[RMDB]
RNA sequence: GGGAACGACUCGAGUAGAGUCGAAAAUUUUAGUACAAGCGAGUACACGCAGUAUACUGCCACGUGUGUGAGAAUACUUUUAGUACAAGCGAGUACACGCAGUAUAGUGCCACUUGUGUGAGAAUACCCUUCCAGUAGAGUUCGCUCUACUGGAAGGAAAAGAAACAACAACAACAAC
Reactivity to DMS in 0.01 (KOAc 150mM, MgCl2 10mM, bicine 150mM(pH8.5), 24C), signal-to-noise 4, nucleotides 027 to 126: u070u000u000u000a200g010u010a020c020a030a100g010c080g010a140g000u040a100c110a090c300g030c090a050g000u020a020u000a030c000u010g010c170c300a100c140g000u000g020u000g000u000g000a150g020a120a090u000a030c030u000u050u020u020a080g040u010a040c190a080a150g010c010g010a240g040u010a000c020a010c050g000c020a000g000u000a010u030a000g000u020g000c020c110a050c040u000u010g010u010g010u030g000a110g010a050a060u000a110c070
Reactivity to 2A3 in 0.01 (KOAc 150mM, MgCl2 10mM, bicine 150mM(pH8.5), 24C), signal-to-noise 5, nucleotides 027 to 126: u070u070u040u070a020g010u030a020c020a030a030g020c020g080a020g090u150a020c080a020c150g030c010a000g050u020a000u000a010c000u030g050c070c070a130c090g020u010g010u000g010u030g030a060g040a130a030u090a060c000u080u120u120u250a120g030u040a020c040a090a010g060c010g030a000g020u010a010c000a000c000g010c010a000g010u020a010u020a040g200u030g010c020c020a030c020u010u000g020u000g000u040g110a080g020a040a040u120a130c010